[RMDB]
RNA sequence: GGGAACGACUCGAGUAGAGUCGAAAACGAUCCUCGAGAGAGGAUCGACGAGUCUUCGGACUCGAUUACCGCGAUGAUGUGCCGCGGGGCUACGAUGGUAUUGUGGGAAAGAAUACCAUUGUACCUUCUUGUCGUAGCCGAACAACUAGCACGUCUACCGCUAUAAAUCCUUCGGGAUUUAUAGCGGAAAAGAAACAACAACAACAAC
Reactivity to 2A3 in 0.01 (KOAc 150mM, MgCl2 10mM, bicine 150mM(pH8.5), 24C), signal-to-noise 5, nucleotides 027 to 156: c010g000a000u000c000c000u010c010g040a040g000a000g010a000g030g000a000u000c000g000a010c000g000a000g000u010c000u050u130c180g090g000a000c000u000c010g000a070u130u160a090c000c000g000c010g020a050u110g000a000u000g010u000g000c010c000g010c010g010g060g000g010c000u000a000c010g010a010u100g000g000u000a010u010u040g020u040g000g030g060a220a230a080g120a080a040u050a090c000c000a010u000u030g010u000a000c000c000u170u230c100u120u250g030u020c000g000u000a010g000c000c000g010a060a030c050a060a030c040u100a010g000c000a000c000g000u000c000u020a030
Reactivity to DMS in 0.01 (KOAc 150mM, MgCl2 10mM, bicine 150mM(pH8.5), 24C), signal-to-noise 1, nucleotides 027 to 156: c020g000a050u010c000c000u020c020g010a300g010a300g000a070g020g010a000u000c010g020a030c000g000a020g000u030c010u010u030c300g080g010a060c000u000c000g010a090u000u010a160c030c060g020c000g010a040u000g000a060u000g000u010g000c000c040g000c020g010g000g000g010c020u020a000c000g010a010u010g000g060u000a020u000u000g050u020g020g010g050a140a130a170g000a220a220u000a090c000c010a030u000u000g030u020a030c040c070u000u010c190u040u000g030u000c020g030u000a010g000c000c000g000a080a060c050a060a090c200u030a060g000c000a040c060g000u020c000u000a200

Notes:
Source: RMDB library OK3TST, as collected in RNAgym. This 207-nucleotide RNA was probed chemically with 2A3 and DMS. The RNA was probed in 150 mM KOAc, 10 mM MgCl2 and 150 mM bicine (pH 8.5) at 24 C. For 2A3 the reverse transcriptase was SuperScript II with manganese.